[RMDB]
RNA sequence: GGGAACGACUCGAGUAGAGUCGAAAAGAAAGAGGCUAAACCGUGUUAACUAUGAUGGCCUUACAAAGCUCGACGAAAAGAAACACUUGAUACUACCGAAAGCCAGAGCUGCUGCCUACGGAAGAAAGACCCAUUAAUGAUUCGUCAUUAAUGGGUCAAAAGAAACAACAACAACAAC
Reactivity to 2A3 in 0.01 (KOAc 150mM, MgCl2 10mM, bicine 150mM(pH8.5), 24C), signal-to-noise 5, nucleotides 027 to 126: g130a010a060a000g090a010g000g040c030u060a150a020a000c080c010g020u020g060u120u120a130a120c150u070a070u190g080a050u140g040g000c000c000u010u030a060c070a020a060a020g020c020u060c020g060a060c050g050a040a070a030a050g080a010a040a000c040a020c030u030u050g040a080u080a130c040u040a040c040c030g090a100a000a010g020c030c010a010g010a010g040c030u020g000c010u030g000c000c000u030a060c030g050g020a040a000g050a050a170a000
Reactivity to DMS in 0.01 (KOAc 150mM, MgCl2 10mM, bicine 150mM(pH8.5), 24C), signal-to-noise 6, nucleotides 027 to 126: g000a140a100a120g010a060g020g000c020u000a040a100a110c120c090g000u010g000u010u050a100a110c140u030a070u010g000a110u020g000g000c010c020u000u010a080c120a070a070a060g010c010u000c020g010a090c060g000a090a040a050a080g000a080a080a040c090a060c090u010u030g000a080u000a060c050u000a060c020c020g000a080a080a150g020c020c060a050g000a110g010c030u000g000c040u000g010c010c000u000a100c080g000g010a090a070g000a030a080a080
The record gives the reactivity of an RNA of 177 nucleotides to 2A3 and DMS. Source: RMDB library OK1LIB, as collected in RNAgym. For 2A3, 5,216 sequencing reads were counted. For DMS the reverse transcriptase was MarathonRT. Conditions: 150 mM KOAc, 10 mM MgCl2 and 150 mM bicine (pH 8.5), 24 C. For DMS, 10,985 sequencing reads were counted.